[RMDB]
RNA sequence: GGGAACGACUCGAGUAGAGUCGAAAACCCUUCCCCCGAGGGUCGCCCAGGAAUGGCGGGACCCACUCGACUGGGGUCCGCGUUCCAUCCUUUCUUACCUUGUGGCCGGCAUGGUCCCAGCCUCCUCGUUCUUUGAAUACUUCGGUAUUCAAAGAACAAAAGAAACAACAACAACAAC
Reactivity to 2A3 in 0.01 (KOAc 150mM, MgCl2 10mM, bicine 150mM(pH8.5), 24C), signal-to-noise 2, nucleotides 027 to 126: c000c000c000u030u050c000c000c010c000c010g030a020g000g030g000u040c070g020c030c010c040a040g050g050a050a040u050g300g030c040g020g010g010a010c010c040c000a040c030u190c060g300a230c190u080g000g000g020g010u000c000c000g020c000g020u040u000c030c000a030u050c010c030u080u150u050c020u060u090a130c000c020u020u050g020u100g070g040c030c000g000g150c140a090u190g030g020u020c000c000c030a030g000c000c000u000c010c000u050c040
Reactivity to DMS in 0.01 (KOAc 150mM, MgCl2 10mM, bicine 150mM(pH8.5), 24C), signal-to-noise 1, nucleotides 027 to 126: c010c000c000u000u000c020c000c000c020c000g020a130g000g000g010u000c060g020c020c020c020a190g020g010a060a010u000g010g040c020g010g000g020a030c010c000c000a020c050u010c270g000a080c180u000g000g000g000g000u000c000c000g010c000g000u000u030c000c000a150u020c100c050u010u010u010c060u000u010a110c060c040u030u000g010u010g000g020c020c050g030g010c060a080u000g010g030u000c020c010c050a120g000c030c020u000c030c030u010c130